Background: An RNA of 177 nucleotides, treated with DMS and 2A3 and read out base by base. For 2A3 the reverse transcriptase was SuperScript II with manganese. DMS adducts were read by reverse transcription with MarathonRT. Source: RMDB library OK1LIB, as collected in RNAgym. The RNA was probed in 150 mM KOAc, 10 mM MgCl2 and 150 mM bicine (pH 8.5) at 24 C. Reactivities are given for positions 27 through 126.

[RMDB]
RNA sequence: GGGAACGACUCGAGUAGAGUCGAAAAGAAGGACAUAACGCGAAGCAGCAGAGAGAAGACUGCAGUGACGCGAAUCACUAGAGGUCAACGACGGCAAGAGAGAGCCGAAGGAGACGAUCCUUAGGAGCAGUAGGCCUGAUUUCGAUCAGGCCUACUGAAAAGAAACAACAACAACAAC
Reactivity to DMS in 0.01 (KOAc 150mM, MgCl2 10mM, bicine 150mM(pH8.5), 24C), signal-to-noise 3, nucleotides 027 to 126: g030a100a130g000g060a010c160a200u000a130a130c070g010c050g000a190a300g010c020a010g000c030a030g000a070g000a260g000a040a260g000a120c000u000g050c040a020g020u000g010a300c030g050c000g000a070a130u000c300a070c170u020a050g000a000g020g020u020c000a000a300c010g000a300c000g000g010c000a020a130g030a200g000a200g020a110g000c010c000g000a060a300g000g000a280g030a050c100g010a110u000c000c000u010u010a130g000g010a100g040
Reactivity to 2A3 in 0.01 (KOAc 150mM, MgCl2 10mM, bicine 150mM(pH8.5), 24C), signal-to-noise 3, nucleotides 027 to 126: g080a010a000g040g000a070c050a100u220a200a070c040g010c000g000a020a000g000c040a020g020c010a000g020a000g020a010g040a180a010g060a020c010u020g000c020a020g010u000g020a000c000g000c030g050a030a060u110c030a020c130u070a030g020a040g150g010u020c010a030a000c000g080a000c010g000g010c040a180a010g090a030g010a010g030a020g140c000c010g020a010a010g010g000a010g000a000c040g010a020u030c000c000u010u010a060g140g000a040g050